[RMDB]
The data come from the RNA Mapping Database (RMDB), library OK3TST. Structure probing data (2A3) for a 207-nucleotide construct. Values cover nucleotides 27 to 156.
RNA sequence: GGGAACGACUCGAGUAGAGUCGAAAACGGAACCAUUCAAGUCUGCACUGUCCGAGUACGGUCUUCGCGUCAAAGUGGAUGAUUCGACGCUGAUAUUUAACAGUGAGGGUGUAUUUGCACCAGACGAGCAUGUCGAGGGCUAUCUUAGAGACCUGGAACUUUGCUAUGACUUCGGUCAUAGCAAAGUAAAAGAAACAACAACAACAAC
Reactivity to 2A3 in 0.01 (KOAc 150mM, MgCl2 10mM, bicine 150mM(pH8.5), 24C), signal-to-noise 2, nucleotides 027 to 156: c030g000g100a070a020c020c000a030u040u010c090a060a020g030u000c040u100g000c050a030c060u020g030u010c010c120g050a040g030u060a070c050g060g050u000c090u000u050c080g030c040g000u010c080a150a080a020g100u140g120g070a050u140g010a030u040u120c020g030a010c000g050c060u040g030a000u020a120u210u210u080a060a030c030a000g010u010g070a080g050g130g000u030g010u020a150u040u190u300g000c010a000c000c000a000g010a030c010g050a050g000c050a030u130g020u120c030g030a140g060g000g000c000u080a030u040c030u030u090a050g000a000g010a170c000c060u020g010g030a010